Description:
Chemical mapping of a 177-nucleotide RNA with DMS and 2A3. Values cover nucleotides 27 to 126. The RNA was probed in 150 mM KOAc, 10 mM MgCl2 and 150 mM bicine (pH 8.5) at 24 C. It was measured as part of the RMDB library OK1LIB.
[RMDB]
RNA sequence: GGGAACGACUCGAGUAGAGUCGAAAAGCGCUGCACUCGAUACCAGUGAUCGCGGUCGACAUAGCCGCUGUUACACGGGAAUCCGAGCAUUCCUUGGAUGCAGCCAGCCUCGCCGGGAACGCGGACCAUGCAAUAAUGCAUUCGUGCAUUAUUGCAUAAAAGAAACAACAACAACAAC
Reactivity to DMS in 0.01 (KOAc 150mM, MgCl2 10mM, bicine 150mM(pH8.5), 24C), signal-to-noise 6, nucleotides 027 to 126: g010c130g030c010u000g020c020a110c050u010c000g010a080u000a090c050c050a120g020u000g000a050u000c300g010c010g010g020u000c100g010a100c250a120u040a210g010c000c020g000c000u000g000u000u020a070c020a080c120g000g000g010a180a030u000c050c070g010a050g010c150a120u000u010c020c020u010u000g010g000a100u010g010c030a030g020c000c050a110g000c030c010u010c050g010c000c010g020g000g010a070a050c100g010c030g000g000a090c100c070
Reactivity to 2A3 in 0.01 (KOAc 150mM, MgCl2 10mM, bicine 150mM(pH8.5), 24C), signal-to-noise 9, nucleotides 027 to 126: g080c080g000c010u030g010c020a030c030u040c030g050a040u070a140c010c030a030g010u010g030a030u040c030g000c010g020g030u120c070g100a190c060a150u300a060g010c000c000g000c030u080g040u050u040a080c080a040c070g010g010g010a060a040u040c090c090g050a030g030c030a070u070u080c020c000u040u110g070g000a020u060g010c000a000g000c000c000a020g010c000c000u030c010g010c010c010g020g000g040a090a050c050g010c020g050g010a030c020c010